[RMDB]
RNA sequence: GGGAACGACUCGAGUAGAGUCGAAAAUAAAAGCGGCAACCAACGCAGCAGAGGGAUGCAACCCAAGAAGGGGAAGGAGACGCAACUCCAAACCACGAAAGUGGAGCGAAAGCAAGCCGCAAAAAAAGAUACAGUAACAGUUCGCUGUUACUGUAUCAAAAGAAACAACAACAACAAC
Reactivity to DMS in 0.01 (KOAc 150mM, MgCl2 10mM, bicine 150mM(pH8.5), 24C), signal-to-noise 4, nucleotides 027 to 126: u030a060a100a130a100g060c020g010g030c020a130a120c110c040a030a300c040g000c020a120g030c080a050g010a160g040g010g020a070u000g010c070a150a160c020c000c010a070a070g000a070a110g010g000g010g010a240a210g000g000a060g040a120c150g000c100a070a090c030u000c000c010a070a160a190c020c000a010c040g020a070a080a070g030u000g000g020a100g010c020g000a060a080a040g000c050a040a220g010c000c010g030c010a000a000a030a100a070a040a090
Reactivity to 2A3 in 0.01 (KOAc 150mM, MgCl2 10mM, bicine 150mM(pH8.5), 24C), signal-to-noise 1, nucleotides 027 to 126: u070a020a070a000a030g010c000g000g000c000a020a030c020c000a040a040c030g010c030a040g030c020a020g080a130g060g030g030a020u040g000c020a070a080c020c000c000a040a080g230a050a050g010g010g000g020a050a080g080g080a060g000a020c070g000c090a020a010c010u000c020c000a040a000a020c000c000a030c010g010a060a010a040g010u020g010g020a050g020c000g040a100a020a000g010c000a000a050g000c000c000g000c000a190a110a000a000a000a000a060